[RMDB]
RNA sequence: GGGAACGACUCGAGUAGAGUCGAAAAACAGCUACUGGUAUGGGUGGCGAAAGUAUUUAUGGCGGUGCUUUUGAAGAUGAAUUUUCAUUAAAUGCAUUUAACUUAUAUGGCGCAUUAUCAAUGGCUAGCUUAACAUGAGAUUCGUCUCAUGUUAAGCAAAAGAAACAACAACAACAAC
Reactivity to 2A3 in 0.01 (KOAc 150mM, MgCl2 10mM, bicine 150mM(pH8.5), 24C), signal-to-noise 9, nucleotides 027 to 126: a000c030a020g020c020u060a010c020u070g060g020u140a090u100g160g050g020u040g050g010c040g040a060a030a010g050u080a120u080u180u020a120u150g070g000c050g020g010u030g010c000u090u100u070u090g100a080a040g010a040u110g090a120a200u120u080u050u060c030a030u010u130a080a060a040u070g020c010a030u060u060u160a090a050c030u100u060a070u040a050u300g100g000c040g000c070a020u030u050a060u100c050a040a020u030g030g000c010u030a060
Reactivity to DMS in 0.01 (KOAc 150mM, MgCl2 10mM, bicine 150mM(pH8.5), 24C), signal-to-noise 4, nucleotides 027 to 126: a100c110a120g010c030u000a090c080u000g000g020u010a040u020g030g010g000u000g000g010c030g000a050a050a090g010u010a040u020u010u010a060u030g010g010c030g020g020u000g000c020u000u010u010u020g010a070a050g030a020u010g030a050a080u020u050u010u010c040a040u010u020a020a040a040u010g000c040a050u020u010u020a080a070c120u020u020a060u030a080u010g010g020c020g010c020a030u000u010a090u020c060a030a090u000g000g020c060u010a100

Source: RMDB library OK1LIB, as collected in RNAgym.
An RNA of 177 nucleotides, treated with 2A3 and DMS and read out base by base.
DMS adducts were read by reverse transcription with MarathonRT.
The 2A3 profile rests on 12,039 reads.